[RMDB]
RNA sequence: GGGAACGACUCGAGUAGAGUCGAAAAUUUGGUCAGUGCUAAGGACUCGUAGCUCGUCUGACUGCGCAUAAUUGAAGGGGGAAGUUAAGUCCAGCCCAGCGGAGUCCAUCUUUCAUUAUUUGUGGUAAAAUGGGGAUGAUUUCGAUCAUCCCCAUUUAAAAGAAACAACAACAACAAC
Reactivity to 2A3 in 0.01 (KOAc 150mM, MgCl2 10mM, bicine 150mM(pH8.5), 24C), signal-to-noise 2, nucleotides 027 to 126: u200u060u190g010g000u010c010a040g010u000g150c000u100a130a060g060g000a120c060u000c020g000u020a060g000c020u020c050g050u010c080u040g020a040c000u060g040c090g040c030a040u060a070a090u180u230g000a100a140g000g000g000g000g000a030a000g100u050u080a090a000g100u000c040c000a000g000c000c030c010a010g020c000g010g010a000g030u000c010c010a070u000c010u000u190u030c120a130u010u180a090u040u000u190g110u050g000g020u060a010
Reactivity to DMS in 0.01 (KOAc 150mM, MgCl2 10mM, bicine 150mM(pH8.5), 24C), signal-to-noise 5, nucleotides 027 to 126: u020u010u030g010g020u000c020a010g020u020g010c040u000a060a040g000g000a030c030u000c060g020u010a050g030c050u020c090g010u010c050u000g000a030c050u010g020c130g000c100a070u040a080a070u040u020g030a060a080g000g030g000g010g000a080a080g010u020u020a090a120g000u000c020c030a150g000c010c030c040a120g000c100g000g010a080g000u020c020c000a070u020c030u010u010u000c040a070u010u020a060u010u030u010g030u010g020g020u030a050
Chemical mapping of a 177-nucleotide RNA with 2A3 and DMS. The RNA was probed in 150 mM KOAc, 10 mM MgCl2 and 150 mM bicine (pH 8.5) at 24 C. For DMS the reverse transcriptase was MarathonRT. Values are in units of 0.01, from 0 to 300, in steps of 10. In probing experiments dimethyl sulfate is read out at A N1 and C N3, which are open when not base-paired.